[RMDB]
RNA sequence: GGGAACGACUCGAGUAGAGUCGAAAACGACAUGCUAGACCAUGGUCGACGAUCGUACGAUCCUAGAUCACUACUAGGAUCUGUGAUAUCUAGACUAGAUCUAGGUCGUGUCAUGCGGUACGGAUCGGACGACCAUAGUAUUCGUACUAUGGUCGUCAAAAGAAACAACAACAACAAC
Reactivity to DMS in 0.01 (KOAc 150mM, MgCl2 10mM, bicine 150mM(pH8.5), 24C), signal-to-noise 7, nucleotides 027 to 126: c110g010a030c020a050u000g010c020u000a040g010a030c040c020a100u010g010g000u000c000g010a150c300g000a020u000c090g020u000a040c090g000a030u000c000c000u000a000g000a100u010c300a130c300u010a090c000u000a010g000g000a010u000c010u010g020u000g000a080u000a030u010c030u000a210g000a020c020u000a060g000a060u000c010u000a030g010g010u010c050g020u000g010u000c030a100u010g010c090g010g010u010a070c110g000g010a090u010c110g020
Reactivity to 2A3 in 0.01 (KOAc 150mM, MgCl2 10mM, bicine 150mM(pH8.5), 24C), signal-to-noise 4, nucleotides 027 to 126: c030g030a020c000a030u070g030c010u030a020g010a020c050c020a230u180g020g000u010c010g000a030c130g000a020u030c030g020u050a010c040g000a010u000c000c000u010a020g000a070u150c100a040c140u180a020c000u010a010g000g000a000u000c070u110g010u010g010a010u000a010u070c020u020a020g030a030c000u010a020g030a040u010c000u020a020g070g040u100c030g000u000g050u040c020a030u110g080c050g080g000u070a060c070g050g050a100u100c070g090
An RNA of 177 nucleotides, treated with DMS and 2A3 and read out base by base. Conditions: 150 mM KOAc, 10 mM MgCl2 and 150 mM bicine (pH 8.5), 24 C. The 2A3 profile rests on 7,606 reads.